The record gives the reactivity of an RNA of 177 nucleotides to DMS and 2A3.
The 2A3 profile rests on 765 reads.
The RNA was probed in 150 mM KOAc, 10 mM MgCl2 and 150 mM bicine (pH 8.5) at 24 C.
RNA sequence: GGGAACGACUCGAGUAGAGUCGAAAACUUCCGAUGUAGACCCGUAUUCUUCGCCUGUACCACGGGUCGGUUUUAGUACAGGCGUUUUCUUAAAACCGUUUAGCUUUAGUUCGCUAAAGCUAAACGGGAGUAAGAGAGUCUUCGGACUCUCUUACUCAAAAGAAACAACAACAACAAC
Reactivity to DMS in 0.01 (KOAc 150mM, MgCl2 10mM, bicine 150mM(pH8.5), 24C), signal-to-noise 2, nucleotides 027 to 126: c300u010u000c040c010g000a130u000g000u000a150g020a040c010c000c000g010u000a140u010u010c100u000u000c020g000c000c010u000g020u010a010c060c170a030c020g000g010g010u010c000g010g000u020u000u010u000a090g010u010a000c020a020g030g000c020g020u010u010u010u000c000u000u010a100a050a080a300c020c000g010u000u000u000a000g000c000u000u010u000a010g000u000u000c220g030c000u010a000a010a000g010c010u000a000a000a010c000g000g010
Reactivity to 2A3 in 0.01 (KOAc 150mM, MgCl2 10mM, bicine 150mM(pH8.5), 24C), signal-to-noise 1, nucleotides 027 to 126: c000u020u000c010c000g030a090u120g070u170a070g020a040c020c000c030g040u080a220u150u050c120u090u120c000g000c010c000u020g000u010a020c070c050a070c150g040g070g020u000c000g010g020u090u000u000u150a010g000u020a000c010a010g000g060c000g020u110u130u010u050c010u060u070a090a080a020a010c000c000g030u000u000u000a000g010c000u000u000u000a030g000u050u020c110g020c090u030a030a060a030g000c000u010a000a000a000c010g000g010
2A3 adducts were read by reverse transcription with SuperScript II with manganese.